The record gives the reactivity of an RNA of 177 nucleotides to DMS and 2A3. It was measured as part of the RMDB library OK2TST. For 2A3, 4,965 sequencing reads were counted. Reactivities are given for positions 27 through 126. Conditions: 150 mM KOAc, 10 mM MgCl2 and 150 mM bicine (pH 8.5), 24 C.
RNA sequence: GGGAACGACUCGAGUAGAGUCGAAAACGAUGGCACCAUUCAGCGUCAGGUUGCUGGCUUCGAUGAUGUCCUGCGCUCUCCGAAACUUCCUGUGCUGACCAAAUCUACUGCAACUGGCAUCACUGUACUGAUGUCACCAAUUCGUUGGUGACAUCAGAAAAGAAACAACAACAACAAC
Reactivity to DMS in 0.01 (KOAc 150mM, MgCl2 10mM, bicine 150mM(pH8.5), 24C), signal-to-noise 3, nucleotides 027 to 126: c120g020a060u000g000g000c050a050c010c040a100u000u000c070a050g020c120g010u010c040a090g010g030u000u000g030c040u000g010g010c080u000u000c100g030a110u000g000a070u000g020u020c020c030u000g010c040g010c040u000c030u010c020c010g000a070a060a120c150u010u010c000c020u000g010u000g000c050u000g010a120c070c040a030a080a070u010c050u000a080c090u000g000c060a060a070c080u000g000g000c050a030u010c070a070c090u000g000u000a100
Reactivity to 2A3 in 0.01 (KOAc 150mM, MgCl2 10mM, bicine 150mM(pH8.5), 24C), signal-to-noise 4, nucleotides 027 to 126: c060g060a090u090g040g000c000a010c020c000a060u080u090c060a030g040c000g080u050c020a030g030g100u100u130g060c030u020g020g010c020u070u070c080g100a100u080g010a040u070g040u030c000c020u010g000c030g020c020u000c000u000c000c010g040a090a070a070c020u030u030c010c020u030g010u060g030c020u020g030a130c000c030a050a070a060u040c040u100a100c050u070g020c010a060a040c050u010g030g000c010a030u060c010a020c060u100g050u110a050